Record summary
The record gives the reactivity of an RNA of 177 nucleotides to 2A3.

[RMDB]
RNA sequence: GGGAACGACUCGAGUAGAGUCGAAAAGCACGUCCGGCAAGACCCGUGCGAACACUUGAGCUCCGGAUUGGCCGCUCUUGUGGAUUAGGACGUUCUAGCUCCGGCUUGGCCGCUAGUUCGUCCGAAAAUCGAUCCCGGCAUUCGUGCCGGGAUCGAUAAAAGAAACAACAACAACAAC
Reactivity to 2A3 in 0.01 (KOAc 150mM, MgCl2 10mM, bicine 150mM(pH8.5), 24C), signal-to-noise 1, nucleotides 027 to 126: g000c000a010c020g100u110c110c170g060g000c030a010a010g070a160c070c000c030g000u000g020c000g000a020a000c000a000c000u000u080g000a000g000c000u000c000c000g140g230a250u250u120g220g130c090c000g000c000u000c000u000u110g000u050g020g000a000u100u120a050g000g000a020c000g000u000u060c000u000a040g000c020u000c070c000g160g030c000u060u230g140g110c000c040g000c000u000a000g000u000u000c000g000u000c000c000g000a000a000a000
It was measured as part of the RMDB library OK1LIB.